Structure probing data (DMS and 2A3) for a 170-nucleotide construct.
Source: RMDB library 15KLIB, as collected in RNAgym.
The 2A3 profile rests on 4,814 reads.
2A3 is a SHAPE reagent: it acylates the 2'-hydroxyl of flexible nucleotides of all four kinds.
Conditions: 150 mM KOAc, 10 mM MgCl2 and 150 mM bicine (pH 8.5), 24 C.
RNA sequence: GGGAACGACUCGAGUAGAGUCGAAAAUGGGUCAAUAAAGCAUCUUAUGAUACUAAUCUUAAUAAGUUCAAUAGAGCUAGUUUGCGUCAAAUUUUUGACGUAGCCCCCAUUGAACUCGAAAAUAAAUAAAUCGAGCUGUUCGCAGCUCGAAAAAGAAACAACAACAACAAC
Reactivity to DMS in 0.01 (KOAc 150mM, MgCl2 10mM, bicine 150mM(pH8.5), 24C), signal-to-noise 4, nucleotides 027 to 129: u040g010g010g020u030c130a060a070u070a190a220a010g030c030a120u030c030u000u000a120u070g000a000u040a040c030u030a120a090u050c300u030u030a110a070u030a070a040g040u000u030c000a000a230u020a050g030a010g050c020u040a090g010u010u020u030g030c000g080u000c000a000a000a200u040u110u060u040u000g000a000c000g000u020a080g000c000c170c030c020c020a020u050u010g010a070a130c020u020c020g100a120a000a010a100u000a050a090a100u100a030a070a130
Reactivity to 2A3 in 0.01 (KOAc 150mM, MgCl2 10mM, bicine 150mM(pH8.5), 24C), signal-to-noise 3, nucleotides 027 to 129: u070g000g000g000u020c000a020a010u100a070a120a010g010c000a090u010c010u000u070a020u070g000a000u010a190c030u070a070a050u120c030u130u090a060a050u200a170a000g030u030u030c020a000a070u040a060g000a000g000c020u000a040g100u050u040u060g000c000g000u000c000a000a010a020u260u080u020u000u000g010a000c000g000u010a000g000c050c030c000c000c000a000u000u000g010a010a040c020u020c030g030a130a000a010a030u270a050a070a000u130a020a010a010